The data come from the RNA Mapping Database (RMDB), library TTRINS.
The record gives the reactivity of an RNA of 177 nucleotides to 2A3 and DMS.
The 2A3 profile rests on 1,626 reads.
[RMDB]
RNA sequence: GGGAACGACUCGAGUAGAGUCGAAAAGAUAUGGACCACUUGUAGAAAUGUCGGUGUGCCAGGGGGAGAUCGGAAACGAUCUCCCCCGGUAAUUCACCGCAUUUCGCAGAUAAGUGGUCCUAAGUCAGCAAUAGUAUACCUUCGGGUAUACUAUUGCAAAAGAAACAACAACAACAAC
Reactivity to 2A3 in 0.01 (KOAc 150mM, MgCl2 10mM, bicine 150mM(pH8.5), 24C), signal-to-noise 2, nucleotides 027 to 126: g030a070u150a090u300g010g020a000c000c020a000c010u050u120g050u100a280g030a060a040a000u300g270u300c110g000g070u010g030u010g000c150c300a300g000g010g050g000g080a040g000a000u000c000g090g000a040a170a020c010g000a000u010c020u030c000c010c010c010c010g010g020u000a020a020u050u020c010a000c020c000g080c020a020u000u000u000c010g040c000a080g020a300u170a090a000g010u000g040g010u000c010c010u000a010a000g010u000c050a010
Reactivity to DMS in 0.01 (KOAc 150mM, MgCl2 10mM, bicine 150mM(pH8.5), 24C), signal-to-noise 2, nucleotides 027 to 126: g000a050u010a300u010g000g020a040c010c000a020c000u000u000g010u010a150g000a000a020a000u000g000u020c020g030g020u000g010u000g000c020c010a110g060g000g000g050g000a050g040a000u000c010g020g000a100a110a290c020g020a020u000c000u000c000c000c000c000c000g000g000u000a010a090u000u010c000a020c000c000g000c000a000u000u000u000c000g000c190a140g010a050u010a040a030g010u000g000g000u000c000c000u000a040a110g000u010c070a130

For DMS the reverse transcriptase was MarathonRT.